[RMDB]
RNA sequence: GGGAACGACUCGAGUAGAGUCGAAAACGCUUAAAGACACUCACCUCCCGCAUAAACAAGCCUCGGGUUAGUAUUUUUGGGGGUUUUGAGCGUCGGAUGGAGCAGGGACUGGAGAUGGUUUGUCACCGUGAAGAGGUAAGUUCGCUUACCUCUUCACAAAAGAAACAACAACAACAAC
Reactivity to DMS in 0.01 (KOAc 150mM, MgCl2 10mM, bicine 150mM(pH8.5), 24C), signal-to-noise 2, nucleotides 027 to 126: c100g030c080u010u000a040a110a110g000a010c010a010c020u000c030a020c200c010u000c010c020c070g020c100a070u020a070a120a050c090a080a100g000c050c030u010c130g030g050g050u000u000a080g000u010a040u010u010u010u000u000g010g000g030g030g010u010u010u010u010g010a030g020c020g000u000c000g000g010a090u000g000g010a060g030c040a110g000g020g000a040c060u000g000g010a050g010a110u020g000g000u010u000u000g010u000c060a130c120c100
Reactivity to 2A3 in 0.01 (KOAc 150mM, MgCl2 10mM, bicine 150mM(pH8.5), 24C), signal-to-noise 1, nucleotides 027 to 126: c030g010c000u070u110a160a080a050g040a020c000a000c010u020c000a020c030c000u000c000c030c010g000c040a040u140a130a140a010c010a100a010g020c010c060u050c070g140g050g000u000u050a040g040u060a210u050u210u030u060u070g040g000g000g070g010u050u070u060u040g010a010g010c000g010u040c010g050g010a070u100g040g060a030g010c020a020g030g000g030a020c040u060g000g010a030g040a080u090g000g100u050u130u100g030u030c040a040c050c050